[RMDB]
RNA sequence: GGGAACGACUCGAGUAGAGUCGAAAACUGACUGGUGCAUUUACAAUCCUUUAGCUAGACAGAAAAGUUCUCCAAGUCCCCACUUGAUUAGCUAGACACAGAGCACUGACUGGUGCAUUUACAAACCUUUAGCUAGACACAGAGUGCUGAUUGGUGCCGCUGUGUACCAUUUCGAUGGUACACAGCGAAAAGAAACAACAACAACAAC
Reactivity to 2A3 in 0.01 (KOAc 150mM, MgCl2 10mM, bicine 150mM(pH8.5), 24C), signal-to-noise 1, nucleotides 027 to 156: c000u020g080a030c000u000g080g000u000g010c030a180u050u050u220a060c070a210a140u090c070c060u180u140u100a040g000c000u000a020g000a120c080a040g100a200a140a000a040g010u060u020c010u000c020c070a010a060g060u010c000c000c000c000a000c000u050u060g040a070u120u120a000g010c000u070a070g000a000c060a000c000a060g060a010g000c050a000c000u030g150a070c050u140g270g000u020g030c030a050u010u040u190a140c060a010a040a080c040c000u000u010u090a000g030c000u020a020g080a100c070a000c010a110g060a000g050u020g000c010u020g020a130u100u180g020g010u090g010c000